[RMDB]
RNA sequence: GGGAACGACUCGAGUAGAGUCGAAAAUGAAAAUGUGCCUCCCUCCCGAAGCUGCGCGCUCGGUCGAAGAGGACGACCACAGCCGAUAGAGGACUGCCGGUCUUCGGUCAAGGGAAAAAGAAAAAAACGACAGACUAAAGUUCGCUUUAGUCUGUCGAAAAGAAACAACAACAACAAC
Reactivity to DMS in 0.01 (KOAc 150mM, MgCl2 10mM, bicine 150mM(pH8.5), 24C), signal-to-noise 1, nucleotides 027 to 126: u000g000a050a040a150a050u000g010u000g000c020c050u000c020c010c040u000c080c000c010g000a060a060g010c040u000g050c100g050c070g010c010u000c060g000g030u010c020g000a150a160g040a140g030g000a100c100g000a080c020c030a070c140a120g010c020c050g010a120u020a060g000a050g040g000a160c010u010g030c090c100g000g000u000c010u030u010c010g000g000u000c200a060a010g010g000g000a090a010a020a020a100g050a010a030a060a040a010a080a160